RNA sequence: GGGAACGACUCGAGUAGAGUCGAAAACCAAUGCUUCGGCAUUGGAAAAAGCGUACUACCUCGCUUUUGACGUCUUAACACUGGAGUCCCAAAUAGGACGAUGAAAGUGGGAGGACGAUAAGCGAGGUAUCGCAAAAAAGUAGAGUUCGCUCUACAAGAUACAACCUCGAUUCGUCGAGGUUGUAUCAAAAGAAACAACAACAACAAC
Reactivity to 2A3 in 0.01 (KOAc 150mM, MgCl2 10mM, bicine 150mM(pH8.5), 24C), signal-to-noise 1, nucleotides 027 to 156: c000c000a000a010u000g000c010u050u150c280g190g000c010a000u000u030g000g040a080a060a000a030a030g000c010g000u010a120c050u020a030c000c020u000c000g000c040u060u020u030u050g300a170c040g000u000c000u050u030a020a030c000a020c050u000g000g010a020g020u000c010c040c020a140a240a100u220a120g000g020a080c070g140a190u050g030a030a020a010g010u040g000g000g000a030g000g010a000c000g000a010u020a010a010g000c010g000a000g010g000u000a010u010c000g000c000a000a000a000a000a190a090g020u000a000g010a010g010u050u080c120g040c120u000c000u020a030c090a100a030
Reactivity to DMS in 0.01 (KOAc 150mM, MgCl2 10mM, bicine 150mM(pH8.5), 24C), signal-to-noise 1, nucleotides 027 to 156: c030c000a000a050u000g010c030u010u000c220g040g010c010a050u000u010g000g020a020a010a030a180a110g010c000g000u010a080c260u000a040c000c000u030c020g010c000u000u000u010u020g000a300c060g020u000c000u010u000a210a210c010a080c090u000g010g000a230g010u000c000c010c000a030a230a200u000a030g010g000a040c030g000a160u020g000a160a130a050g040u000g000g040g050a130g000g010a030c000g000a060u000a010a060g010c010g010a000g040g030u000a010u000c000g070c000a000a030a090a110a080a080g010u000a010g010a010g030u000u000c120g040c000u000c000u000a000c000a000a300